[RMDB]
RNA sequence: GGGAACGACUCGAGUAGAGUCGAAAAGGCACGUUGGCUCACGCCUGUAAUCCCAGGACUUUGGGAGGCUGAAGCGGGCAGAUCACUUGAGGCCAGGAGUUCCAGGCCAGCUUGGCCAACAUGGCAACACGCUAACAGUCUUCGGACUGUUAGCGUGAAAAGAAACAACAACAACAAC
Reactivity to DMS in 0.01 (KOAc 150mM, MgCl2 10mM, bicine 150mM(pH8.5), 24C), signal-to-noise 1, nucleotides 027 to 126: g030g000c000a100c110g020u000u000g020g000c000u000c220a120c200g010c000c030u010g050u010a040a040u000c000c000c000a060g010g020a050c090u020u000u000g000g000g000a080g000g000c010u000g000a060a070g040c090g000g020g000c010a030g000a070u000c060a070c050u000u020g010a080g000g030c090c010a050g000g000a100g010u020u000c080c040a040g000g010c010c030a100g010c170u000u000g000g000c000c000a040a040c010a170u000g050g000c030a120a080